[RMDB]
RNA sequence: GGGAACGACUCGAGUAGAGUCGAAAAGACGUAAUCCGCGCAAAUCCACAAACGCCAACGAUGAGCGUUUCGCUGUAGCCGCUUAAGGCAACAGCCGGGGCCGCCUGAGCCCUGUUAACAAAGACGGGAAACUCGAUGCCAUUCGUGGCAUCGAGAACAGCGAUUAAAUAUUCGUAUUUAAUCGCUGAAAAGAAACAACAACAACAAC
Reactivity to DMS in 0.01 (KOAc 150mM, MgCl2 10mM, bicine 150mM(pH8.5), 24C), signal-to-noise 2, nucleotides 027 to 156: g040a100c060g030u000a140a150u000c020c040g010c000g020c020a050a080a120u000c020c020a060c050a050a280a010c000g000c020c070a190a150c100g010a100u000g020a130g020c000g000u010u010u000c030g010c010u030g020u000a100g030c000c000g010c200u000u000a050a170g020g000c010a090a050c010a010g010c040c030g000g010g020g000c050c040g050c040c080u020g010a230g010c020c000c030u000g000u000u000a150a120c100a040a090a060g000a130c030g000g070g000a080a080a130c000u000c000g020a010u000g000c000c000a060u000u000c300g010u010g000g000c030a020u000c000g010a000g020a030a090
Reactivity to 2A3 in 0.01 (KOAc 150mM, MgCl2 10mM, bicine 150mM(pH8.5), 24C), signal-to-noise 6, nucleotides 027 to 156: g050a010c020g040u060a080a070u080c070c040g000c010g000c070a060a090a090u060c070c030a100c070a110a050a010c030g010c020c020a130a070c160g160a190u170g030a050g040c000g000u020u070u080c050g000c000u000g000u020a040g010c000c010g090c180u210u230a130a060g000g000c010a030a010c000a010g000c000c010g000g000g000g000c000c030g020c010c020u030g010a020g000c000c000c000u020g030u090u090a020a020c020a010a000a010g180a040c010g000g000g010a060a040a040c000u000c000g000a000u000g000c000c000a040u070u080c180g060u080g000g000c000a000u000c000g000a000g000a000a000